The record gives the reactivity of an RNA of 177 nucleotides to DMS. Conditions: 150 mM KOAc, 10 mM MgCl2 and 150 mM bicine (pH 8.5), 24 C. For DMS, 880 sequencing reads were counted. For DMS the reverse transcriptase was MarathonRT. High DMS reactivity at an A or C suggests that its Watson-Crick edge is free.
RNA sequence: GGGAACGACUCGAGUAGAGUCGAAAAAGUGGCUAGUUCGCUAGCCACUAAAGACGGCACGGCAGCGGAAAUAAGCCGAAACGCAAACAGAAGCGACUGAAAGACUCCAAACAUUCGUGUUUGGAAAGAAGAUCUCAGAUUUCGAUCUGAGAUCUUCAAAAGAAACAACAACAACAAC
Reactivity to DMS in 0.01 (KOAc 150mM, MgCl2 10mM, bicine 150mM(pH8.5), 24C), signal-to-noise 1, nucleotides 027 to 126: a010g040u000g000g000c000u040a050g080u000u010c150g020c010u000a000g000c000c010a000c010u000a030a000a010g000a130c110g000g020c110a120c060g000g010c040a110g030c070g020g020a070a030a020u010a090a120g000c030c010g010a020a040a080c120g030c040a030a120a080c120a060g000a050a090g010c070g010a100c060u000g010a050a110a100g000a040c110u000c000c000a000a010a000c000a020u000u020c100g000u000g030u000u010u000g010g010a010a040a160